The record gives the reactivity of an RNA of 170 nucleotides to 2A3 and DMS. For 2A3 the reverse transcriptase was SuperScript II with manganese. For 2A3, 35,543 sequencing reads were counted. The DMS profile rests on 42,359 reads.
RNA sequence: GGGAACGACUCGAGUAGAGUCGAAAAGAGAUCGACCGGGUCCCGCAGAACCCGAUGGAGUUCCCAACCUUCCCCUUACGGACAAAAGCUGGUCCCGAUAGGGGCACCCACAAUAGGAUGGCAAAAGAUACUAGAGUGUUCGCACUCUAGAAAAGAAACAACAACAACAAC
Reactivity to 2A3 in 0.01 (KOAc 150mM, MgCl2 10mM, bicine 150mM(pH8.5), 24C), signal-to-noise 9, nucleotides 027 to 129: g100a000g010a040u060c040g020a030c050c020g010g000g020u030c010c040c040g020c020a030g030a070a040c000c000c020g010a030u120g020g040a060g020u050u030c010c000c010a010a060c020c030u110u110c000c000c000c010u010u030a020c000g020g000a010c030a030a170a020a000g070c110u140g080g010u030c000c010c000g040a060u090a090g010g000g000g000c010a010c000c000c000a040c020a040a100u070a130g050g010a040u030g020g000c010a030a040a020a050g090a050u140a080
Reactivity to DMS in 0.01 (KOAc 150mM, MgCl2 10mM, bicine 150mM(pH8.5), 24C), signal-to-noise 6, nucleotides 027 to 129: g000a040g010a080u020c060g000a090c020c000g000g000g030u020c030c010c070g020c110a050g020a120a080c010c000c000g030a060u030g010g010a030g000u010u000c040c010c000a130a090c130c000u030u020c010c000c000c010u000u010a180c300g020g000a060c000a070a080a070a130g030c160u050g080g020u000c000c030c010g030a150u060a040g020g050g000g000c120a010c000c000c000a060c090a060a040u030a070g020g000a030u000g010g020c050a070a060a060a080g000a070u060a100